Description:
This 177-nucleotide RNA was probed chemically with DMS and 2A3. For 2A3 the reverse transcriptase was SuperScript II with manganese. It was measured as part of the RMDB library VIROID. The 2A3 profile rests on 1,156 reads. 2A3 is a SHAPE reagent: it acylates the 2'-hydroxyl of flexible nucleotides of all four kinds. The RNA was probed in 150 mM KOAc, 10 mM MgCl2 and 150 mM bicine (pH 8.5) at 24 C.

[RMDB]
RNA sequence: GGGAACGACUCGAGUAGAGUCGAAAAACAGAGGACCCUCUCACUCGAAGGAGUAAGACCAUAGCGAUGGGGGGAGAUGCUAGGAGUUAGAGGAGACCGAAGCGAGGAGAAAAGCAAAGAAAGCAACGACACAACUAAAGUUCGCUUUAGUUGUGUCAAAAGAAACAACAACAACAAC
Reactivity to DMS in 0.01 (KOAc 150mM, MgCl2 10mM, bicine 150mM(pH8.5), 24C), signal-to-noise 2, nucleotides 027 to 126: a030c170a100g000a100g000g000a240c040c030c000u010c000u000c060a050c050u000c010g000a120a090g000g000a080g010u000a060a070g010a080c060c030a060u010a080g000c050g010a080u000g010g000g020g020g010g030a050g010a070u000g000c060u000a050g000g000a070g100u010u010a070g020a050g000g010a080g010a070c030c020g000a050a050g020c070g000a030g020g000a110g030a060a020a040a110g000c030a050a030a100g000a060a070a060g000c080a120a030c150
Reactivity to 2A3 in 0.01 (KOAc 150mM, MgCl2 10mM, bicine 150mM(pH8.5), 24C), signal-to-noise 1, nucleotides 027 to 126: a030c090a000g090a090g000g030a100c000c010c040u000c000u030c000a040c000u010c010g070a080a070g070g040a050g040u050a110a030g100a110c000c030a090u050a040g110c050g070a130u140g010g030g000g000g090g000a050g000a000u090g020c000u050a050g060g000a040g000u000u000a040g020a000g000g060a020g000a000c010c020g000a020a000g070c010g000a000g030g010a030g020a020a140a000a000g000c040a120a000a070g030a040a060a000g050c000a010a010c100